[RMDB]
RNA sequence: GGGAACGACUCGAGUAGAGUCGAAAAAGGUUCGCUGUGGUGCAACUCUUAUUAGUAACUAAUCCAAAGCAAGUAUAGGAGAACAAGUUUUUAACUAUUUUUAGGCAGAUAAAAAAUAGUAUUUGACAAAAUCGAUUGUCGUUCGCGACAAUCGAAAUCUUACACAUGUGUUCGCACAUGUGUAAGAAAAAGAAACAACAACAACAAC
Reactivity to 2A3 in 0.01 (KOAc 150mM, MgCl2 10mM, bicine 150mM(pH8.5), 24C), signal-to-noise 2, nucleotides 027 to 156: a000g060g000u050u040c020g000c040u000g000u000g050g110u040g040c030a060a040c020u010c040u110u120a220u110u040a070g020u030a090a040c060u030a100a050u060c060c020a090a060a030g050c020a080a020g030u040a030u050a140g000g040a070g030a040a040c030a050a040g010u000u000u000u000u050a020a000c000u020a000u000u010u010u000u010a020g010g080c050a030g030a200u140a020a050a020a000a010a000u000a010g010u010a110u120u080u090g050a020c010a010a090a030a100u030c010g000a000u000u000g000u010c010g000u010u000c150g010c000g090a000c000a000a000u000c000g000a000a000a000
Reactivity to DMS in 0.01 (KOAc 150mM, MgCl2 10mM, bicine 150mM(pH8.5), 24C), signal-to-noise 1, nucleotides 027 to 156: a030g080g030u000u000c090g070c020u020g000u040g000g000u000g010c000a000a110c040u000c020u030u000a040u010u000a120g000u010a130a090c110u020a060a090u010c070c060a090a130a160g050c050a030a170g020u010a110u000a060g020g000a050g000a070a070c010a050a170g000u000u020u020u000u000a030a050c000u000a010u000u000u000u000u000a240g000g040c020a150g000a160u030a000a000a040a020a000a000u000a000g000u010a210u000u000u000g000a170c070a020a040a100a190u000c000g000a010u010u000g020u000c010g000u000u000c250g010c000g000a030c000a000a020u000c000g000a000a030a020

The record gives the reactivity of an RNA of 207 nucleotides to 2A3 and DMS. The 2A3 profile rests on 1,175 reads. The RNA was probed in 150 mM KOAc, 10 mM MgCl2 and 150 mM bicine (pH 8.5) at 24 C. For 2A3 the reverse transcriptase was SuperScript II with manganese. Reactivities are given for positions 27 through 156. It was measured as part of the RMDB library M2RFPK.